[RMDB]
RNA sequence: GGGAACGACUCGAGUAGAGUCGAAAAAGUGUCGGUGCGUUGAGCGGCGGGGCCUGUAUCGCGGUCCGCAGCCUAUCCCGGAGCUGGACGGACAACGCGAUCCGGUUGAUCGAGGCGGACGCCCGCCCUGGACCAUACCAUUCGUGGUAUGGUCCAGAAAAGAAACAACAACAACAAC
Reactivity to DMS in 0.01 (KOAc 150mM, MgCl2 10mM, bicine 150mM(pH8.5), 24C), signal-to-noise 2, nucleotides 027 to 126: a100g010u010g020u010c040g030g020u010g010c030g040u000u010g010a120g040c080g000g030c030g010g010g020g010c060c010u010g030u000a040u000c010g010c030g030g000u000c000c010g020c020a030g000c000c010u000a100u000c020c010c010g000g000a160g000c000u010g010g000a160c020g000g010a020c030a080a120c030g020c010g000a020u000c060c180g020g010u000u000g010a110u000c070g000a070g010g030c020g000g000a070c040g000c040c010c020g010c040c030
Reactivity to 2A3 in 0.01 (KOAc 150mM, MgCl2 10mM, bicine 150mM(pH8.5), 24C), signal-to-noise 1, nucleotides 027 to 126: a000g150u110g080u080c030g030g010u140g060c040g000u020u050g040a080g110c030g020g010c040g000g060g020g020c000c010u080g040u100a050u000c000g000c000g070g000u010c000c040g010c010a000g000c000c000u060a120u050c050c000c000g000g000a100g000c030u030g000g040a080c010g000g010a010c020a250a040c170g000c000g000a000u030c010c000g020g040u030u060g050a150u140c030g010a040g180g000c000g030g010a010c030g030c000c000c020g000c000c040